Structure probing data (2A3) for a 207-nucleotide construct. The data come from the RNA Mapping Database (RMDB), library VIROID. The reactions ran in a buffer of 150 mM KOAc, 10 mM MgCl2 and 150 mM bicine (pH 8.5), at 24 C.
RNA sequence: GGGAACGACUCGAGUAGAGUCGAAAAGUCCGACGAGAUCGCGGCUGGGGCUUAGGACCCCACUCCUGCGAGACAGGAGUAAUCCUAAACAGGGUUUUCACCCUUCCUUUAGUUUCCUUCCUCUCCUGGAGAGGUCUUCUGCCCUAGCCCGGUCUUCCUAUCAUCUCGGCUUCGGCCGAGAUGAUAGAAAAGAAACAACAACAACAAC
Reactivity to 2A3 in 0.01 (KOAc 150mM, MgCl2 10mM, bicine 150mM(pH8.5), 24C), signal-to-noise 1, nucleotides 027 to 156: g050u000c050c020g040a150c100g020a020g000a000u000c000g010c160g030g000c000u000g000g000g010g030c000u070u010a010g010g010a010c020c010c030c000a060c000u000c000c000u040g050c140g020a000g020a050c300a060g030g010a020g000u040a060a020u070c010c010u010a030a010a080c300a140g030g000g010u180u230u300u300c160a070c010c000c090u020u030c000c000u000u000u000a000g000u020u050u000c010c000u080u110c010c000u000c010u010c000c000u010g000g000a000g010a000g010g000u000c000u040u000c000u010g000c000c000c000u000a000g000c000c000c010g000g000u010c000u020u000c000